This 207-nucleotide RNA was probed chemically with DMS and 2A3.

RNA sequence: GGGAACGACUCGAGUAGAGUCGAAAAGGGACUGGCCCAAUGAAGCCCGGCAACCUAACUUUAUUUAAGCGUAAAGUGAAGGUGCUAAUUCCAGCAAAAUGGUGUAUUCCGUUUUGGUAGAUAAGAGAAGCGUGACAUGAGUUCGCUCAUGUCACAAGUCUUAUCUAUAGUUCGCUAUAGAUAAGACAAAAGAAACAACAACAACAAC
Reactivity to DMS in 0.01 (KOAc 150mM, MgCl2 10mM, bicine 150mM(pH8.5), 24C), signal-to-noise 3, nucleotides 027 to 156: g010g030g020a100c050u000g020g030c000c010c010a130a110u010g010a140a090g000c010c000c060g010g010c010a050a030c000c010u010a140a010c010u010u000u000a020u010u000u000a130a210g030c300g030u000a010a000a030g010u000g020a080a050g020g000u000g000c020u010a060a180u010u000c000c000a070g020c010a030a020a020a030u000g000g030u000g000u000a090u010u000c000c000g030u000u000u000u010g000g020u010a040g010a090u000a090a120g000a170g010a080a120g040c120g010u000g020a010c010a020u010g000a030g000u000u010c300g030c000u000c000a010u000g000u000c010a000c010a010a080
Reactivity to 2A3 in 0.01 (KOAc 150mM, MgCl2 10mM, bicine 150mM(pH8.5), 24C), signal-to-noise 6, nucleotides 027 to 156: g010g000g010a020c030u030g030g030c010c010c000a000a040u140g030a070a020g040c000c000c000g010g000c030a090a110c000c000u020a010a010c010u030u010u030a050u040u170u140a170a060g130c050g040u000a000a000a010g000u020g080a130a040g000g000u000g000c000u010a030a030u090u040c020c000a010g010c020a050a010a000a010u040g010g020u110g050u170a130u120u100c000c010g010u000u000u020u020g060g020u080a130g060a200u140a190a070g070a020g070a160a030g100c060g070u000g000a000c000a000u000g000a000g030u060u080c160g030c070u010c000a000u000g000u000c000a000c000a000a000
Source information
Source: RMDB library M2RFPK, as collected in RNAgym. The reactions ran in a buffer of 150 mM KOAc, 10 mM MgCl2 and 150 mM bicine (pH 8.5), at 24 C.